Description:
The record gives the reactivity of an RNA of 177 nucleotides to 2A3 and DMS. The RNA was probed in 150 mM KOAc, 10 mM MgCl2 and 150 mM bicine (pH 8.5) at 24 C.

RNA sequence: GGGAACGACUCGAGUAGAGUCGAAAACCCUUCCCAUGAGUCCACACGGUAAGCGCCUCUGGCCCGAGGCCGCUCGUCGGGAAUCGGACACUGGAACUAGUACUCUGGUCAAUGCGGAUUGCCUGUGCUACACAAUCUUCUUCGGAAGAUUGUGUAGAAAAGAAACAACAACAACAAC
Reactivity to 2A3 in 0.01 (KOAc 150mM, MgCl2 10mM, bicine 150mM(pH8.5), 24C), signal-to-noise 2, nucleotides 027 to 126: c000c000c000u000u030c050c010c000a060u110g080a030g050u020c050c000a040c020a020c150g000g020u060a040a030g020c010g010c070c020u010c040u060g070g060c040c020c010g000a010g030g030c020c010g010c020u030c010g040u030c060g040g040g010a030a080u090c050g030g010a010c020a030c090u070g050g080a050a020c030u000a010g040u080a040c020u010c020u050g010g030u010c010a050a080u090g030c030g060g060a140u010u030g030c010c000u050g020u050g080
Reactivity to DMS in 0.01 (KOAc 150mM, MgCl2 10mM, bicine 150mM(pH8.5), 24C), signal-to-noise 2, nucleotides 027 to 126: c000c000c010u000u000c000c010c010a170u020g020a120g010u010c040c040a160c080a110c100g010g000u010a060a060g010c040g000c010c010u010c050u000g010g020c040c060c090g000a040g000g000c060c030g010c000u000c110g020u000c030g000g010g010a100a060u010c120g010g010a080c040a050c060u010g040g000a050a060c090u010a080g000u000a070c090u000c020u000g010g030u010c050a080a080u000g010c070g000g000a130u000u000g010c020c000u000g010u000g000
The DMS profile rests on 2,117 reads. For 2A3, 2,817 sequencing reads were counted.